[RMDB]
Source: RMDB libraries RFM100 and RFMREP, as collected in RNAgym. Structure probing data (DMS and 2A3) for a 177-nucleotide construct. The RNA was probed in 150 mM KOAc, 10 mM MgCl2 and 150 mM bicine (pH 8.5) at 24 C.

RNA sequence: GGGAACGACUCGAGUAGAGUCGAAAAGAUGAUGAGAAAAAAGAUGAGCAAAUUGAAGAAGAGAGAAGACUUAUGUAUGUAGGUAUGACUCGUGCAGAGGAAAGUUUAACUUUGAGCUCACCGAUAAAGCGAGAUAUAGUUUCGACUAUAUCUCGCUAAAAGAAACAACAACAACAAC
Reactivity to DMS in 0.01 (KOAc 150mM, MgCl2 10mM, bicine 150mM(pH8.5), 24C), signal-to-noise 3, nucleotides 027 to 126: g010a080u010g000a050u010g010a080g020a000a030a090a080a070a060g000a060u000g010a060g000c040a060a140a100u020u010g010a050a110g000a080a070g020a070g000a100g010a080a100g010a070c020u000u010a020u020g010u010a040u030g010u010a030g020g000u010a070u020g010a160c040u000c010g010u010g020c030a070g000a070g000g000a060a030a070g010u020u020u010a040a080c020u000u000u000g020a110g010c000u000c000a030c000c030g000a090u010a010a090
Reactivity to 2A3 in 0.01 (KOAc 150mM, MgCl2 10mM, bicine 150mM(pH8.5), 24C), signal-to-noise 4, nucleotides 027 to 126: g070a030u150g020a010u120g040a000g050a010a080a020a000a010a000g110a100u060g030a010g010c050a050a090a080u110u210g060a080a080g040a040a000g030a040g020a000g020a170a000g000a040c030u110u070a080u160g070u020a020u090g110u120a030g020g020u140a070u160g100a110c000u010c050g030u050g020c060a030g000a000g020g070a090a010a040g000u030u090u110a050a010c000u040u040u070g000a000g000c000u010c000a020c010c020g010a020u100a060a180